The record gives the reactivity of an RNA of 177 nucleotides to DMS and 2A3.
RNA sequence: GGGAACGACUCGAGUAGAGUCGAAAACAUCGGCGUCAUGAUGGCUCACAGUAAUUACGGUGCUGCGCUGGAGAAACAGGGUGUGGAAAUCACGCUGAUUUACAGCGGCAGCCAUAAGGUGGAUGGCGAUUUUUAUCCGUUUCGACGGAUAAAAAUCAAAAGAAACAACAACAACAAC
Reactivity to DMS in 0.01 (KOAc 150mM, MgCl2 10mM, bicine 150mM(pH8.5), 24C), signal-to-noise 3, nucleotides 027 to 126: c070a030u000c020g010g000c050g010u000c050a050u010g000a040u010g000g010c040u000c030a100c100a110g040u020a060a080u000u010a090c170g040g010u010g010c040u010g030c030g010c000u010g000g000a140g000a030a030a100c030a020g000g000g040u000g010u010g000g020a070a180a210u010c000a020c010g000c010u000g010a120u000u000u000a100c010a000g000c010g030g020c040a020g000c000c050a020u000a060a070g010g010u000g000g010a140u000g000g010c160
Reactivity to 2A3 in 0.01 (KOAc 150mM, MgCl2 10mM, bicine 150mM(pH8.5), 24C), signal-to-noise 3, nucleotides 027 to 126: c000a040u060c030g080g040c040g080u070c050a120u130g100a050u050g040g030c020u040c010a120c020a000g070u150a090a080u090u160a070c110g100g040u160g050c030u000g000c010g000c010u010g030g030a120g140a120a070a000c010a000g030g090g020u040g020u030g050g130a060a100a020u260c020a010c040g120c030u000g070a130u020u020u020a040c020a000g000c000g120g000c010a000g000c000c000a020u070a020a020g120g040u040g010g040a040u040g050g000c020

Reactivities are rounded to 0.1 and cut off at 0 and 3. 2A3 adducts were read by reverse transcription with SuperScript II with manganese.